[RMDB]
RNA sequence: GGGAACGACUCGAGUAGAGUCGAAAAGAUAUGGAGUACGAGUUCGAAGAACAUAUGAACUACUCGGAAACGAGCAUAUGGGAGAACGAGUACUCCUAAGUCAAACCGGAACGUUCGCGUUCCGGAACUAUCAACUGCUGUUCGCAGCAGUUGAUAGAAAAGAAACAACAACAACAAC
Reactivity to DMS in 0.01 (KOAc 150mM, MgCl2 10mM, bicine 150mM(pH8.5), 24C), signal-to-noise 2, nucleotides 027 to 126: g010a040u000a090u020g010g000a020g000u000a000c010g020a300g000u000u000c000g010a080a140g010a150a160c010a020u010a010u020g000a200a120c300u000a300c010u000c030g010g010a050a040a020c020g000a010g000c010a010u020a010u010g030g000g000a030g010a000a000c000g000a300g010u000a000c000u000c010c000u040a010a010g000u000c040a030a120a210c000c000g020g000a010a010c000g000u000u010c220g030c030g030u000u000c000c000g000g040a020a060
Reactivity to 2A3 in 0.01 (KOAc 150mM, MgCl2 10mM, bicine 150mM(pH8.5), 24C), signal-to-noise 2, nucleotides 027 to 126: g000a010u010a000u020g010g000a020g010u000a010c000g010a010g030u020u000c060g110a300a190g030a250a000c020a010u020a020u040g030a130a160c090u180a120c010u290c000g000g000a010a010a000c000g010a000g050c020a010u020a010u000g000g000g000a300g000a020a000c000g000a010g010u000a000c000u010c000c000u000a000a000g000u020c020a000a050a130c000c000g000g010a000a000c010g000u080u090c300g000c030g200u010u010c010c000g000g010a000a010